[RMDB]
RNA sequence: GGGAACGACUCGAGUAGAGUCGAAAAGACGCCUGUGUGGCGAAGCGAGCAUGAGAUGGAGCCGCAAGAGAAGAUGAGAUAGAAGCGGCCCGAUAGCUUGCUCGCGAAAAGAUCCAUCUCACAGAGAACUGAUACCGUCAUUCGUGACGGUAUCAGUAAAAGAAACAACAACAACAAC
Reactivity to DMS in 0.01 (KOAc 150mM, MgCl2 10mM, bicine 150mM(pH8.5), 24C), signal-to-noise 3, nucleotides 027 to 126: g010a130c030g010c030c000u010g030u070g010u060g010g000c010g000a060a140g000c000g000a000g000c030a020u010g000a020g050a060u000g010g000a110g000c000c000g000c000a070a080g000a130g030a110a130g020a190u030g000a190g010a150u010a110g010a180a110g030c000g000g010c000c000c020g010a030u010a010g000c000u000u000g000c010u000c040g000c000g000a030a060a090a120g010a100u020c050c020a160u000c020u010c050a160c180a100g000a080g000a060
Reactivity to 2A3 in 0.01 (KOAc 150mM, MgCl2 10mM, bicine 150mM(pH8.5), 24C), signal-to-noise 4, nucleotides 027 to 126: g040a000c020g020c000c000u110g090u090g080u170g090g030c010g000a040a000g000c000g000a000g000c000a000u040g000a020g090a190u110g050g040a070g000c000c000g000c010a070a020g130a000g070a160a070g100a110u250g050a070g070a120u150a090g160a170a010g010c000g000g000c000c000c010g080a070u070a010g040c030u020u000g000c000u000c010g000c000g020a010a030a000a010g020a000u000c020c000a030u000c020u010c010a130c030a100g090a000g020a040
Conditions: 150 mM KOAc, 10 mM MgCl2 and 150 mM bicine (pH 8.5), 24 C. The record gives the reactivity of an RNA of 177 nucleotides to DMS and 2A3. Reactivities are rounded to 0.1 and cut off at 0 and 3. It was measured as part of the RMDB library OK1LIB.